[RMDB]
RNA sequence: GGGAACGACUCGAGUAGAGUCGAAAAAGCGGACAAUCGUCCAUGAUCCUUGACGAGACAGGUAAAGCAGCUAUCAAAUGCUGCAGCUCUCUCCACGUCGAGGAACUGGCUGCUUUACCUAUGCGGGCACGAGCUACUCAUUCGUGAGUAGCUCGUGAAAAGAAACAACAACAACAAC
Reactivity to DMS in 0.01 (KOAc 150mM, MgCl2 10mM, bicine 150mM(pH8.5), 24C), signal-to-noise 1, nucleotides 027 to 126: a000g000c130g010g000a020c060a090a090u070c070g000u000c010c010a020u000g050a030u030c040c000u000u000g000a080c090g000a090g000a150c190a000g030g010u000a020a030a050g040c030a010g020c010u000a200u140c220a020a080a100u030g010c040u030g000c150a030g010c070u000c010u010c050u020c030c060a130c170g010u020c080g000a030g000g000a020a100c050u000g040g050c000u000g060c000u000u000u000a090c000c010u030a070u000g010c000g000g000g010
Reactivity to 2A3 in 0.01 (KOAc 150mM, MgCl2 10mM, bicine 150mM(pH8.5), 24C), signal-to-noise 3, nucleotides 027 to 126: a000g080c090g000g030a000c040a090a240u150c110g000u000c000c010a040u060g050a020u000c010c030u050u120g010a020c020g000a000g020a050c080a100g010g000u070a040a040a000g000c000a000g000c000u040a040u190c110a070a070a070u170g050c060u030g000c000a000g020c000u020c000u000c000u030c050c040a220c100g100u210c080g110a020g000g020a010a110c010u020g010g020c010u010g000c000u030u020u000a000c020c000u020a020u120g070c030g000g040g020